[RMDB]
RNA sequence: GGGAACGACUCGAGUAGAGUCGAAAAGGAUGCUCGUUCGCGAGCAUCCACUGAGAUAGCCACUAUAAAGUUUAAGUCUUCCUACUCGAGACAGGAUGUCUAUGCUCCUGGCCUUCGGGCCAGGAAAUGGAUUAGGAAUGUUCGCAUUCCUAAUCCAAAAAGAAACAACAACAACAAC
Reactivity to DMS in 0.01 (KOAc 150mM, MgCl2 10mM, bicine 150mM(pH8.5), 24C), signal-to-noise 3, nucleotides 027 to 126: g020g010a000u000g010c000u010c000g020u000u010c220g010c020g000a020g020c010a010u000c000c010a030c080u010g000a140g000a050u000a040g040c180c180a100c060u000a110u000a120a080a080g000u000u000u010a150a160g000u000c020u000u000c100c000u000a040c010u000c030g000a030g000a080c080a130g030g000a070u000g010u000c030u000a100u000g010c110u000c000c000u000g000g000c000c000u000u010c160g030g000g010c010c000a010g000g010a000a010a050
Reactivity to 2A3 in 0.01 (KOAc 150mM, MgCl2 10mM, bicine 150mM(pH8.5), 24C), signal-to-noise 2, nucleotides 027 to 126: g010g020a020u000g000c010u000c010g060u040u080c250g040c020g070a000g000c010a000u000c000c000a010c020u010g010a020g000a020u070a040g070c160c010a080c100u190a100u130a240a200a110g050u060u060u090a120a010g020u000c010u000u000c000c010u000a030c000u000c010g010a020g050a060c060a030g090g040a090u170g060u110c050u030a170u080g090c000u010c000c000u000g000g000c020c000u050u050c210g060g000g000c000c000a000g010g020a000a010a000
The data come from the RNA Mapping Database (RMDB), library M2PK50. This 177-nucleotide RNA was probed chemically with DMS and 2A3. The DMS profile rests on 1,967 reads. 2A3 adducts were read by reverse transcription with SuperScript II with manganese.